[RMDB]
Conditions: 150 mM KOAc, 10 mM MgCl2 and 150 mM bicine (pH 8.5), 24 C. The record gives the reactivity of an RNA of 177 nucleotides to DMS and 2A3. For DMS, 1,882 sequencing reads were counted. 2A3 adducts were read by reverse transcription with SuperScript II with manganese.
RNA sequence: GGGAACGACUCGAGUAGAGUCGAAAAGAUAUGGAAUCCGACACCGAUGAAAGGGUCUACCCACCUCGGAAACGAGAGGACCCUGGAGGUGGGGAUUCCUAAGUCAAAAGAUGGCUUCGGCCAUCAACAAUGCUUAUUGCUUCGGCAAUAAGCAUUGAAAAGAAACAACAACAACAAC
Reactivity to DMS in 0.01 (KOAc 150mM, MgCl2 10mM, bicine 150mM(pH8.5), 24C), signal-to-noise 2, nucleotides 027 to 126: g000a020u010a110u000g000g010a030a000u000c010c010g010a260c020a010c010c000g010a080u010g000a160a140a040g000g020g020u000c010u000a110c210c140c120a260c150c000u000c010g000g000a020a020a030c000g010a030g010a250g010g010a010c000c000c000u000g000g000a020g040g020u000g010g010g020g000a010u000u000c000c000u010a010a050g000u000c040a120a080a080a100g000a000u000g010g000c000u000u020c170g010g000c000c000a000u000c010a130a130
Reactivity to 2A3 in 0.01 (KOAc 150mM, MgCl2 10mM, bicine 150mM(pH8.5), 24C), signal-to-noise 2, nucleotides 027 to 126: g000a010u000a000u050g010g000a000a000u030c020c040g250a280c110a010c030c000g300a300u010g000a010a000a010g000g000g000u000c000u070a150c130c120c090a290c150c000u000c010g010g000a020a030a010c000g000a010g030a140g140g050a030c000c000c000u000g020g020a020g000g000u020g020g000g000g000a000u010u000c010c000u000a000a000g000u000c000a000a050a050a200g000a010u010g000g000c000u080u110c230g130g050c030c000a020u010c000a000a010